[RMDB]
RNA sequence: GGGAACGACUCGAGUAGAGUCGAAAAGAUAUGGAGAGGAACUACUCGACAACAGCCGACGAAGUCGGAAACGACAGAGGCUGCUAAUCGAGCCUCUCCUAAGUCAAAAGGCGACUUCGGUCGCCAACCAUUCACUUUAGUUCGCUAAAGUGAAUGGAAAAGAAACAACAACAACAAC
Reactivity to 2A3 in 0.01 (KOAc 150mM, MgCl2 10mM, bicine 150mM(pH8.5), 24C), signal-to-noise 4, nucleotides 027 to 126: g020a000u050a040u120g000g000a000g000a010g030g030a060a020c080u190a050c000u300c020g030a000c020a100a020c000a010g000c010c020g210a300c080g080a300a020g010u010c010g020g010a120a030a030c010g000a000c000a010g130a040g060g000c010u000g010c020u150a150a130u030c000g000a000g010c010c000u000c010u020c000c000u000a010a000g000u000c010a000a000a080a190g000g000c010g010a010c000u040u110c300g100g000u010c000g000c010c000a000a000
Reactivity to DMS in 0.01 (KOAc 150mM, MgCl2 10mM, bicine 150mM(pH8.5), 24C), signal-to-noise 3, nucleotides 027 to 126: g000a040u000a300u010g000g000a030g000a010g000g010a090a040c040u010a300c010u000c000g010a040c090a110a090c010a000g000c000c010g000a210c290g000a050a140g000u000c000g000g020a060a050a100c010g030a010c010a020g010a110g000g020c000u000g010c010u010a150a220u010c010g000a000g000c000c000u000c000u000c000c010u000a010a050g000u000c030a090a110a210a150g000g000c000g010a010c000u000u020c150g040g010u000c010g010c000c010a010a030